RNA sequence: GGGAACGACUCGAGUAGAGUCGAAAAAUUUGUGCAUCCUCUUGCGCAUAGGCAUCCAGUGAUAGAGUUAAAGUACCAACUCUCCGGAAGGUACGUGCUGUCUGUUUUACGAUAUCGACAUCAACCAGAUUAGUAGCGCAUUCGUGCGCUACUAAUCAAAAGAAACAACAACAACAAC
Reactivity to 2A3 in 0.01 (KOAc 150mM, MgCl2 10mM, bicine 150mM(pH8.5), 24C), signal-to-noise 2, nucleotides 027 to 126: a010u120u090u070g040u040g000c030a080u060c000c070u040c020u070u080g010c020g000c070a060u070a090g060g000c030a040u020c090c000a060g060u050g080a060u060a080g090a010g050u080u110a170a170a030g040u020a020c020c000a030a000c080u040c000u000c040c030g020g000a030a000g040g000u000a000c010g000u090g020c010u020g020u070c010u000g110u000u010u030u090a030c040g010a010u010a050u200c110g090a090c060a050u110c020a060a000c070c050a000
Reactivity to DMS in 0.01 (KOAc 150mM, MgCl2 10mM, bicine 150mM(pH8.5), 24C), signal-to-noise 2, nucleotides 027 to 126: a130u010u000u000g010u010g000c040a000u010c140c120u040c030u020u010g010c000g000c000a020u010a030g010g010c080a060u020c000c000a030g010u000g000a090u000a060g020a080g000u030u020a050a040a040g100u000a000c050c010a080a300c080u000c020u000c140c080g000g040a050a220g040g010u010a050c010g030u000g000c030u000g000u020c090u000g010u000u020u000u020a060c080g020a060u020a030u040c130g040a100c160a000u000c030a100a100c120c000a180

An RNA of 177 nucleotides, treated with 2A3 and DMS and read out base by base. Reactivities are given for positions 27 through 126. High DMS reactivity at an A or C suggests that its Watson-Crick edge is free. The RNA was probed in 150 mM KOAc, 10 mM MgCl2 and 150 mM bicine (pH 8.5) at 24 C.